[RMDB]
RNA sequence: GGGAACGACUCGAGUAGAGUCGAAAAACUUCGGUAAUAUGAGGGCACAGUAAAUCCCGCAAGGAUGAGAAUGUGAUGUGGAAUGAGUAAAUCUAAGGUGAGGAGGCAUCCUCUUUAGUCCGCAAGAACGUCUUCUUGCUUUCGAGCAAGAAGACGUAAAAGAAACAACAACAACAAC
Reactivity to DMS in 0.01 (KOAc 150mM, MgCl2 10mM, bicine 150mM(pH8.5), 24C), signal-to-noise 2, nucleotides 027 to 126: a070c040u000u060c010g000g030u020a110a110u000a100u000g000a040g000g000g000c040a040c010a090g020u000a040a150a020u000c010c000c030g050c300a040a300g000g000a060u000g000a050g000a030a180u000g010u000g000a140u030g020u000g060g000a050a090u000g000a030g020u000a040a110a150u020c090u030a020a110g030g000u000g040a000g000g000a090g000g000c080a070u020c070c030u010c010u000u000u000a080g000u040c080c070g000c200a060a150g000a060
Reactivity to 2A3 in 0.01 (KOAc 150mM, MgCl2 10mM, bicine 150mM(pH8.5), 24C), signal-to-noise 2, nucleotides 027 to 126: a000c000u060u020c120g000g020u150a070a030u050a100u300g060a050g000g090g000c010a020c000a190g000u060a000a040a080u000c000c000c000g140c020a000a000g160g000a080u030g000a000g060a040a030u050g030u040g020a100u110g000u000g020g010a040a060u050g000a040g190u010a150a060a120u170c120u020a100a050g220g080u100g090a060g020g000a000g000g060c000a020u000c000c000u010c000u000u000u000a040g000u000c040c040g040c010a090a000g080a020
Notes:
An RNA of 177 nucleotides, treated with DMS and 2A3 and read out base by base. Conditions: 150 mM KOAc, 10 mM MgCl2 and 150 mM bicine (pH 8.5), 24 C. For 2A3 the reverse transcriptase was SuperScript II with manganese. Source: RMDB libraries RFM100 and RFMREP, as collected in RNAgym.